[RMDB]
RNA sequence: GGGAACGACUCGAGUAGAGUCGAAAAGUCUUCCAGGAGGACCAGAAUGUGGUCGAGCUCACCUUCGGGGGUGAGGACGCCUCGCUUCUGCACCUUCACGAUGCGGGACUCCUCCUGAUGGGGGAACCCUUCACGUAUGUUUCGACAUACGUGAAGGAAAAGAAACAACAACAACAAC
Reactivity to DMS in 0.01 (KOAc 150mM, MgCl2 10mM, bicine 150mM(pH8.5), 24C), signal-to-noise 5, nucleotides 027 to 126: g010u000c030u000u000c050c010a070g010g000a030g000g010a110c300c070a130g020a050a060u020g000u000g000g020u010c030g010a170g010c000u000c000a010c000c000u000u010c300g030g010g010g010g010u000g010a010g000g000a130c200g030c030c020u000c050g010c140u000u000c000u000g020c110a080c010c020u000u010c190a130c160g000a030u000g000c080g010g000g010a060c180u000c010c010u000c000c010u010g010a080u000g010g000g020g010g000a070a120c130
Reactivity to 2A3 in 0.01 (KOAc 150mM, MgCl2 10mM, bicine 150mM(pH8.5), 24C), signal-to-noise 5, nucleotides 027 to 126: g020u020c030u090u040c030c000a010g010g030a020g000g020a040c000c020a030g060a150a100u210g090u030g030g040u100c030g010a020g090c000u000c010a020c050c000u110u220c210g300g030g000g000g000u020g000a000g000g070a000c010g050c000c000u050c010g020c090u030u050c020u080g020c020a100c030c000u100u170c060a030c150g130a090u090g010c050g010g010g030a040c020u030c010c010u010c020c000u120g040a210u240g040g000g000g000g000a030a040c000